Description: Structure probing data (2A3 and DMS) for a 177-nucleotide construct. The reactions ran in a buffer of 150 mM KOAc, 10 mM MgCl2 and 150 mM bicine (pH 8.5), at 24 C. The data come from the RNA Mapping Database (RMDB), library OK2TST. For 2A3, 947 sequencing reads were counted. Values cover nucleotides 27 to 126.
RNA sequence: GGGAACGACUCGAGUAGAGUCGAAAAGCAUACGCGGAUCCAAAUUCUCGCGAUUUGCCGCAUCACUAAUCCUAUACACGUAUGUGCGGUCAAGCGCAGAAAAACGAGCAUCAAAACCGCUUGGUGCACUCACUGGCGGAUUCGUCCGCCAGUGAGUAAAAGAAACAACAACAACAAC
Reactivity to 2A3 in 0.01 (KOAc 150mM, MgCl2 10mM, bicine 150mM(pH8.5), 24C), signal-to-noise 1, nucleotides 027 to 126: g040c010a070u070a210c090g010c000g060g010a070u030c010c060a070a050a060u050u000c040u030c060g000c020g090a170u000u000u050g010c000c000g050c020a040u140c020a050c070u170a110a050u110c000c020u070a050u040a110c110a000c110g080u070a040u130g030u010g000c010g000g000u040c020a020a000g020c000g030c060a020g130a010a040a000a000a000c090g010a030g000c010a000u040c000a000a050a050a110c030c020g000c000u010u000g000g010u060g000c030
Reactivity to DMS in 0.01 (KOAc 150mM, MgCl2 10mM, bicine 150mM(pH8.5), 24C), signal-to-noise 1, nucleotides 027 to 126: g000c120a090u000a050c100g050c020g010g010a220u000c040c090a090a120a180u000u010c040u020c220g000c010g020a110u000u000u000g000c000c000g000c020a040u020c210a010c120u000a030a110u020c070c070u000a060u020a070c140a050c270g000u000a000u000g040u000g000c050g000g020u000c200a040a020g020c020g020c000a010g000a040a030a110a080a080c280g010a120g020c020a000u010c020a010a000a120a060c090c150g000c070u000u010g000g010u000g000c000